[RMDB]
RNA sequence: GGGAACGACUCGAGUAGAGUCGAAAACUCUUGAUAUAAGUCGCGUAGUCGUAGCUCUGGAUCGCCACGUCGACGCCGAUGUCGCCGAAGGCGGAUCGGAGGAAUUCUGCGCCGACACGGGUCGGGCCAUCCUCCUACCGUUCGCGGUAGGAGGAUGAAAAGAAACAACAACAACAAC
Reactivity to DMS in 0.01 (KOAc 150mM, MgCl2 10mM, bicine 150mM(pH8.5), 24C), signal-to-noise 3, nucleotides 027 to 126: c010u000c000u010u030g000a160u010a080u020a040a200g020u000c000g010c000g030u000a010g000u000c100g000u010a300g010c000u000c000u010g020g020a010u000c000g020c010c010a300c030g020u010c000g000a010c000g030c190c220g000a110u010g010u000c020g000c060c010g010a160a120g020g000c010g000g000a030u010c030g020g000a010g000g010a080a110u000u000c000u000g010c010g000c100c060g040a010c010a150c030g000g000g000u000c000g000g000g000c030
Reactivity to 2A3 in 0.01 (KOAc 150mM, MgCl2 10mM, bicine 150mM(pH8.5), 24C), signal-to-noise 6, nucleotides 027 to 126: c010u020c010u010u090g160a090u070a050u070a300a070g010u010c000g000c000g020u020a000g000u020c060g040u050a100g190c000u000c020u040g150g030a030u010c000g030c010c000a020c010g020u020c010g000a020c000g090c100c110g200a230u300g010u010c000g000c010c000g060a200a080g040g000c050g050g010a040u010c010g010g010a000g000g010a010a030u040u000c000u000g010c010g050c130c060g000a000c010a020c010g040g000g000u010c000g000g010g000c000